Structure probing data (2A3 and DMS) for a 207-nucleotide construct.
It was measured as part of the RMDB library OK3TST.
For DMS the reverse transcriptase was MarathonRT.
2A3 adducts were read by reverse transcription with SuperScript II with manganese.
The 2A3 profile rests on 1,279 reads.
The reactions ran in a buffer of 150 mM KOAc, 10 mM MgCl2 and 150 mM bicine (pH 8.5), at 24 C.
RNA sequence: GGGAACGACUCGAGUAGAGUCGAAAAGAGCGUGAGCAAGAUGAAGAGGAGCUUUACCGAGUGUUAGGACAGCUCAGAGGAGACCUGCAGGGGGCAGCUCCUCUGCAGGCAGGUCGUCUCGUCCAGUGUUCAGCUAUCAGCAGUGAGGAGGCCCUGACCGCUGAGUAUUAUUCGUAAUACUCAGCGGAAAAGAAACAACAACAACAAC
Reactivity to 2A3 in 0.01 (KOAc 150mM, MgCl2 10mM, bicine 150mM(pH8.5), 24C), signal-to-noise 2, nucleotides 027 to 156: g100a010g010c070g050u050g030a020g040c030a030a030g030a060u090g070a060a050g010a040g020g020a010g020c010u040u060u100a110c040c010g010a020g060u130g020u080u120a030g000g040a010c000a020g020c020u040c100a020g030a040g040g000a050g020a160c000c000u000g000c010a010g000g030g000g030g000c060a050g030c030u080c000c000u020c000u010g010c000a000g020g000c000a000g010g030u030c020g050u000c010u010c040g070u000c010c010a040g020u020g040u120u070c010a030g000c040u090a070u170c020a030g050c000a020g020u030g060a060g020g030a030g010g020c020c030c000u040g040a070
Reactivity to DMS in 0.01 (KOAc 150mM, MgCl2 10mM, bicine 150mM(pH8.5), 24C), signal-to-noise 1, nucleotides 027 to 156: g000a030g000c000g000u000g000a090g030c030a070a040g000a130u020g000a080a080g030a100g010g030a070g010c030u000u000u000a160c020c010g000a120g020u000g030u000u020a080g030g000a090c030a080g030c000u000c050a080g010a150g060g000a090g000a030c070c000u020g030c040a060g020g010g000g000g040c050a190g000c300u000c000c010u000c000u000g040c040a040g020g030c050a000g030g000u020c050g020u000c010u010c000g000u000c070c040a100g020u010g040u000u000c050a140g000c000u010a090u000c030a090g020c010a030g050u010g000a110g020g010a050g030g030c020c010c010u000g000a190